RNA sequence: GGGAACGACUCGAGUAGAGUCGAAAAACAGUAGAGGUCGCAAGCCUAUACUGUGCGGUGAACAUUCUAGUAGGCCGCCUCAACAGAGGACGUCUAUGAAUGGUGAGGGAGCCAACCCUUGUAAUUGACACGGAUAUAUCUUCGGAUAUAUCCGUGUAAAAGAAACAACAACAACAAC
Reactivity to DMS in 0.01 (KOAc 150mM, MgCl2 10mM, bicine 150mM(pH8.5), 24C), signal-to-noise 9, nucleotides 027 to 126: a020c000a010g020u000a010g010a010g010g000u000c060g010c300a160a300g000c000c000u000a050u010a010c010u000g010u000g020c170g000g000u000g000a130a100c000a010u000u010c010u020a120g030u000a010g000g000c040c210g010c010c010u000c020a160a110c300a190g000a010g010g000a070c060g010u000c000u000a020u010g000a040a010u000g000g020u010g000a060g010g000g010a150g010c050c070a140a150c000c000c010u000u010g010u020a060a160u010u010g000
Reactivity to 2A3 in 0.01 (KOAc 150mM, MgCl2 10mM, bicine 150mM(pH8.5), 24C), signal-to-noise 5, nucleotides 027 to 126: a000c010a000g000u000a000g010a020g020g040u220c070g020c300a070a040g000c010c000u010a010u000a010c010u000g030u030g030c080g020g050u090g050a050a030c000a010u010u020c030u040a060g040u010a000g070g020c050c070g060c000c020u040c020a210a300c070a110g010a010g010g020a060c010g010u000c000u010a030u160g020a020a030u040g010g080u100g010a040g010g010g010a020g020c000c010a040a070c040c000c000u000u120g150u130a140a150u060u170g030
About this RNA
An RNA of 177 nucleotides, treated with DMS and 2A3 and read out base by base. 2A3 adducts were read by reverse transcription with SuperScript II with manganese. Values cover nucleotides 27 to 126. The data come from the RNA Mapping Database (RMDB), libraries RFM100 and RFMREP. The RNA was probed in 150 mM KOAc, 10 mM MgCl2 and 150 mM bicine (pH 8.5) at 24 C.